[RMDB]
RNA sequence: GGGAACGACUCGAGUAGAGUCGAAAACGACCACGAAUCCAACAUCCGGCACGACAUUGACGACCUGGCUAAGGCAGUCCGUGACGGGUUCAUCGACAUCCGCAGGGACAUCGGUGGCCUGCGCGAGAUCCCUUGAGGGUUUCGACCCUCAAGGGAUAAAAGAAACAACAACAACAAC
Reactivity to DMS in 0.01 (KOAc 150mM, MgCl2 10mM, bicine 150mM(pH8.5), 24C), signal-to-noise 2, nucleotides 027 to 126: c100g000a180c040c000a120c060g030a100a090u010c010c040a090a110c160a070u000c030c070g000g000c020a050c040g020a150c110a100u000u000g030a080c040g040a160c020c000u000g000g020c130u030a050a060g010g010c220a060g010u000c030c000g020u000g010a130c000g010g000g010u000u000c050a060u000c030g010a040c130a200u020c010c000g010c250a070g010g000g010a080c080a060u020c050g020g010u000g000g000c000c030u010g010c030g020c080g000a120g000
Reactivity to 2A3 in 0.01 (KOAc 150mM, MgCl2 10mM, bicine 150mM(pH8.5), 24C), signal-to-noise 2, nucleotides 027 to 126: c010g040a020c030c020a030c080g090a010a050u110c070c090a040a010c000a180u000c030c010g010g020c020a000c050g100a040c050a170u090u210g080a080c060g030a150c010c040u080g160g040c070u120a040a030g000g040c060a040g020u010c060c000g020u000g080a090c010g000g000g050u160u110c020a060u040c000g040a040c020a040u000c040c000g060c000a060g000g000g110a060c020a040u200c130g120g020u040g010g020c020c010u030g000c010g010c000g000a000g010
Structure probing data (DMS and 2A3) for a 177-nucleotide construct. For 2A3 the reverse transcriptase was SuperScript II with manganese. It was measured as part of the RMDB library OK2TRN. DMS (dimethyl sulfate) methylates the pairing face of unpaired adenines and cytosines. The reactions ran in a buffer of 150 mM KOAc, 10 mM MgCl2 and 150 mM bicine (pH 8.5), at 24 C.